[RMDB]
RNA sequence: GGGAACGACUCGAGUAGAGUCGAAAAACGAUCGGAUCGGCCCUGACAUACAGCUGGCCAGCAUCAGGAUCGUACGGCGCCGCUGGCCGAUCGUGUCACGUACGUACCUACGUACAGCAGUACUGGAGUUUUUCCGAGGAUUCGUCCUCGGAAAAACAAAAGAAACAACAACAACAAC
Reactivity to 2A3 in 0.01 (KOAc 150mM, MgCl2 10mM, bicine 150mM(pH8.5), 24C), signal-to-noise 1, nucleotides 027 to 126: a000c010g000a020u010c000g000g020a020u050c020g040g020c030c000c040u050g010a010c020a150u210a040c070a030g090c000u060g040g060c050c080a050g000c000a060u120c030a050g090g040a100u060c070g000u030a040c050g060g130c090g000c040c030g010c060u040g050g000c000c000g010a000u040c030g000u010g060u080c050a030c180g000u000a000c020g000u050a090c030c060u120a000c010g000u010a010c000a020g030c020a090g130u100a060c010u060g000g000a100
Reactivity to DMS in 0.01 (KOAc 150mM, MgCl2 10mM, bicine 150mM(pH8.5), 24C), signal-to-noise 2, nucleotides 027 to 126: a050c020g000a020u000c030g020g010a140u030c010g000g010c000c020c040u010g000a070c190a090u020a130c180a130g030c080u010g010g030c030c040a050g020c110a070u000c050a030g060g020a120u000c070g000u000a080c090g040g000c100g000c020c070g020c120u000g010g010c000c000g020a010u000c050g030u000g000u000c170a050c220g010u000a000c020g000u010a160c210c170u000a130c010g020u000a030c010a160g010c100a090g000u000a080c000u000g010g000a300